[RMDB]
RNA sequence: GGGAACGACUCGAGUAGAGUCGAAAACAUCAGUAAUAUUGCAAAUGGUCAUCAUGUGUGCUUGCGUGAGCAGUUCGGCGUUCCUUGACCCUGAGGGCAGCAUUGAGUUUGAGAAUGGAGCGGUGCCACGGGAGGAAGGAUUCGUCCUUCCUCCCGUAAAAGAAACAACAACAACAAC
Reactivity to DMS in 0.01 (KOAc 150mM, MgCl2 10mM, bicine 150mM(pH8.5), 24C), signal-to-noise 2, nucleotides 027 to 126: c090a110u010c080a070g020u010a080a080u000a050u010u020g030c090a050a100a080u010g000g000u000c060a070u010c050a030u000g020u000g010u010g000c080u010u010g020c090g000u000g000a110g010c040a070g000u000u000c050g000g000c020g010u000u010c020c000u000u010g010a070c070c030c040u010g020a130g000g000g010c050a070g030c070a090u000u010g000a090g000u000u010u010g010a090g020a040a090u010g010g020a080g040c050g020g000u000g000c040c050
Reactivity to 2A3 in 0.01 (KOAc 150mM, MgCl2 10mM, bicine 150mM(pH8.5), 24C), signal-to-noise 1, nucleotides 027 to 126: c020a030u150c030a000g090u180a130a220u090a070u190u260g040c020a010a040a080u100g020g000u040c010a030u010c020a020u050g010u000g010u010g060c060u040u070g040c030g070u120g010a010g020c030a030g000u060u090c020g130g000c040g060u040u060c060c000u010u040g050a100c010c000c000u050g080a110g020g050g000c020a040g030c000a020u000u080g070a090g120u130u120u100g090a170g020a080a090u070g000g000a030g000c060g000g010u030g000c050c000